[RMDB]
RNA sequence: GGGAACGACUCGAGUAGAGUCGAAAAUUGCAAGCCUUCGGGCUUGCAAGGUGUCGCAAUGCGGAAUAUAUAAUCCUCCGCUUAAGGAUUAUACCGACUUAAGUGCCAGGCUGUUCGCAGCCUGGAAUCUAGAUUAAGCAUUCGUGCUUAAUCUAGAAAAAGAAACAACAACAACAAC
Reactivity to 2A3 in 0.01 (KOAc 150mM, MgCl2 10mM, bicine 150mM(pH8.5), 24C), signal-to-noise 5, nucleotides 027 to 126: u020u000g010c000a000a000g010c000c000u040u080c260g120g000g000c000u010u000g000c000a000a000g000g000u080g030u040c050g000c220a080a090u180g010c010g000g130a150a010u190a010u010a000u020a190a040u030c010c010u010c070c040g110c060u050u130a060a010g010g000a010u040u030a030u070a080c010c030g070a120c150u140u140a130a050g060u030g130c000c000a000g010g000c010u010g030u060u060c220g020c090a000g000c000c000u000g000g010a000a000
Reactivity to DMS in 0.01 (KOAc 150mM, MgCl2 10mM, bicine 150mM(pH8.5), 24C), signal-to-noise 6, nucleotides 027 to 126: u000u010g000c000a020a010g010c010c010u000u010c230g020g020g020c000u000u010g000c000a000a000g000g020u010g020u000c050g020c090a130a080u010g000c010g000g010a180a080u000a190u010a040u000a020a030u000c030c010u000c170c180g000c170u000u010a090a020g000g000a020u000u000a020u000a060c080c030g010a070c120u010u010a060a080g010u010g000c000c000a010g010g000c000u000g010u000u010c160g010c010a010g010c000c000u000g000g000a020a020
Chemical mapping of a 177-nucleotide RNA with 2A3 and DMS. For 2A3, 6,152 sequencing reads were counted. 2A3 is a SHAPE reagent: it acylates the 2'-hydroxyl of flexible nucleotides of all four kinds. It was measured as part of the RMDB library M2PK50. Reactivities are given for positions 27 through 126.